[RMDB]
RNA sequence: GGGAACGACUCGAGUAGAGUCGAAAACGACCCGAAAUGAGAAGCUCUCCUCCUGUGAAGCCCCCUUCCUGGGGCGCUGUGCAGCGAGGCCUCUUGGGCGGCGGCCACGCCGUGGUCCCCGGGGUCCUCACGCCAUGGAUUUCGAUCCAUGGCGUGAAAAAGAAACAACAACAACAAC
Reactivity to DMS in 0.01 (KOAc 150mM, MgCl2 10mM, bicine 150mM(pH8.5), 24C), signal-to-noise 1, nucleotides 027 to 126: c230g030a140c000c000c020g010a040a080a100u090g000a000g030a070a140g000c040u010c050u010c020c050u000c030c000u000g020u000g000a130a050g000c010c030c000c000c000u040u040c270c100u000g000g010g010g010c190g030c000u090g020u080g010c040a040g010c110g000a000g000g000c220c010u000c010u000u000g020g020g020c000g000g010c040g000g000c100c210a090c010g030c000c030g000u000g000g000u000c000c000c040c040g020g000g000g000u000c010c090
Reactivity to 2A3 in 0.01 (KOAc 150mM, MgCl2 10mM, bicine 150mM(pH8.5), 24C), signal-to-noise 3, nucleotides 027 to 126: c040g120a100c010c000c000g050a090a060a090u210g000a050g000a100a030g020c010u010c000u000c070c010u040c000c020u010g000u000g060a010a000g020c010c010c000c000c010u030u190c030c140u110g000g010g000g000c040g000c000u000g080u150g000c010a000g010c020g070a020g000g020c000c000u020c000u020u020g000g030g000c010g030g020c000g000g000c020c070a150c180g090c020c040g000u010g050g000u080c010c000c000c010g000g000g000g000u020c000c000